[RMDB]
RNA sequence: GGGAACGACUCGAGUAGAGUCGAAAAGAUAUGGACCUUGAGGCUUUUGACGGGAGUGUCGGAAACGACAUGACCGAUAAGCCUUUGGGUCCUAAGUCAAACUUGUGACACUUCGGUGUCACAAGAACUACACCUUAUCCUUCGGGAUAAGGUGUAGAAAAGAAACAACAACAACAAC
Reactivity to 2A3 in 0.01 (KOAc 150mM, MgCl2 10mM, bicine 150mM(pH8.5), 24C), signal-to-noise 3, nucleotides 027 to 126: g030a000u030a020u090g000g000a000c000c000u000u030g030a010g030g000c060u090u300u300u300g300a110c020g000g000g020a040g000u010g000u020c010g010g040a040a040a010c010g010a000c000a010u030g010a010c000c000g020a040u090a100a000g000c000c000u000u000u000g000g010g000u000c000c000u000a020a000g010u020c030a040a090a160c000u000u020g000u000g010a000c000a000c020u030u080c290g180g010u000g000u000c000a000c000a010a000g000a000a010
Reactivity to DMS in 0.01 (KOAc 150mM, MgCl2 10mM, bicine 150mM(pH8.5), 24C), signal-to-noise 3, nucleotides 027 to 126: g020a040u000a260u020g010g010a020c010c000u000u000g010a000g010g020c010u000u010u010u000g040a200c130g010g000g000a300g010u000g010u000c000g020g010a060a050a120c010g010a010c000a020u000g000a230c000c000g000a060u010a030a020g000c000c010u000u000u000g000g000g000u010c000c000u000a000a030g000u000c020a060a130a210c010u000u000g000u000g000a000c000a010c010u000u010c200g030g020u000g000u000c000a000c010a000a000g000a070a150